[RMDB]
RNA sequence: GGGAACGACUCGAGUAGAGUCGAAAAAAGGGACGGGGUUUCCAGUUGGAUUGAUCCGUAUAAUUUUGAUGCGAAAGCAUAGAGAGGUGCAGUGUUACUCUUCAUCACGGAUUUUGUGAACGGAGAGCGUUACUAUUGUGUUCGCACAAUAGUAACGAAAAGAAACAACAACAACAAC
Reactivity to 2A3 in 0.01 (KOAc 150mM, MgCl2 10mM, bicine 150mM(pH8.5), 24C), signal-to-noise 5, nucleotides 027 to 126: a000a000g050g000g020a010c030g010g000g010g020u020u020u010c030c000a060g120u170u180g050g040a050u010u080g030a020u040c000c010g030u050a090u060a170a140u080u130u090u160g100a030u030g000c000g060a110a040a010g000c020a020u070a050g080a000g000a020g020g050u050g020c050a020g030u010g030u070u090a050c000u000c000u010u000c010a020u010c000a000c030g110g040a180u090u080u090u300g030u000g010a060a020c080g010g000a010g000a000g000
Reactivity to DMS in 0.01 (KOAc 150mM, MgCl2 10mM, bicine 150mM(pH8.5), 24C), signal-to-noise 7, nucleotides 027 to 126: a070a050g000g000g010a060c070g020g000g000g000u000u010u010c010c030a180g010u020u010g010g000a100u000u010g010a080u010c040c030g020u000a070u030a060a090u010u010u010u010g010a040u010g010c010g000a120a090a110g000c030a020u000a080g000a080g010a050g000g010u000g010c070a110g010u010g000u000u000a100c010u000c000u010u000c010a130u000c010a010c010g010g010a160u010u010u010u020g010u000g000a020a060c150g020g000a020g010a020g000

About this RNA: Chemical mapping of a 177-nucleotide RNA with 2A3 and DMS. Values are in units of 0.01, from 0 to 300, in steps of 10. For 2A3 the reverse transcriptase was SuperScript II with manganese. Values cover nucleotides 27 to 126.